Chemical mapping of a 207-nucleotide RNA with DMS. Source: RMDB library M2RFPK, as collected in RNAgym. The RNA was probed in 150 mM KOAc, 10 mM MgCl2 and 150 mM bicine (pH 8.5) at 24 C. For DMS the reverse transcriptase was MarathonRT.
[RMDB]
RNA sequence: GGGAACGACUCGAGUAGAGUCGAAAAAACCCGUUGAUUGAAAUUGAACCGUCCUGUUAUCGAAAGAUAGGCAGAAGAUACGAAAUGUGUGACAGCAUGGGAAGUAAAGGCAGACCGUUGUUCCCUUAAAAUCGUCGAAUCUUCGGAUUCGACGAAAUCUGUAGAGAUGGUUCGCCAUCUCUACAGAAAAAGAAACAACAACAACAAC
Reactivity to DMS in 0.01 (KOAc 150mM, MgCl2 10mM, bicine 150mM(pH8.5), 24C), signal-to-noise 1, nucleotides 027 to 156: a120a120c000c000c020g060u000u000g010a210u010u000g000a070a180a150u000u000g000a060a080c060c020g030u010c000c000u010g000u000u000a040u000c040g000a080a080a180g000a030u000a020g020g000c000a050g020a080a060g020a160u000a040c100g010a110a110a110u000g020u010g020u010g020a080c110a080g000c070a110u010g020g000g000a050a040g000u000a050a010a080g000g010c010a060g050a070c120c050g000u000u010g030u000u000c000c000c000u000u000a020a060a100a230u000c000g020u010c020g020a010a010u000c010u000u050c300g010g000a020u000u000c000g020a010c000g040a000a000a040